About this RNA:
The record gives the reactivity of an RNA of 177 nucleotides to 2A3 and DMS. For 2A3 the reverse transcriptase was SuperScript II with manganese. Source: RMDB libraries RFM100 and RFMREP, as collected in RNAgym.

RNA sequence: GGGAACGACUCGAGUAGAGUCGAAAAUUUCACGUACGGUUUGGACAAUAUGGAGAAAUGAAUGUUACUCUUUUUGCAAUGACGCUGAAACAUAUUUUCGCUUUGUUAGCCAUAAGUUUAAAACAAUUAUUCGUACUAACUUCGGUUAGUACGAAUAAAAAGAAACAACAACAACAAC
Reactivity to 2A3 in 0.01 (KOAc 150mM, MgCl2 10mM, bicine 150mM(pH8.5), 24C), signal-to-noise 4, nucleotides 027 to 126: u030u010u010c010a030c040g060u150a010c050g040g070u040u100u130g070g020a010c010a060a020u070a060u270g080g010a080g050a100a070a010u130g120a130a060u110g060u030u090a060c010u040c000u030u080u040u050u050g030c030a080a050u060g010a010c060g000c050u070g030a030a060a000c050a020u120a140u050u100u020u010c000g000c020u050u030u030g040u070u040a050g050c020c000a050u040a110a060g020u000u060u130a060a150a010a010c030a020a040u030
Reactivity to DMS in 0.01 (KOAc 150mM, MgCl2 10mM, bicine 150mM(pH8.5), 24C), signal-to-noise 3, nucleotides 027 to 126: u000u000u010c000a050c080g010u020a040c190g000g010u030u030u010g000g000a100c050a050a050u020a040u000g000g000a070g010a040a040a060u010g000a100a040u050g010u010u010a110c060u020c010u000u000u010u000u010g010c060a050a060u010g000a040c060g000c030u000g010a010a040a040c160a110u010a070u010u000u000u010c030g040c040u000u010u000g000u000u000a100g010c020c050a060u000a050a070g000u000u000u000a030a030a020a060c170a040a120u020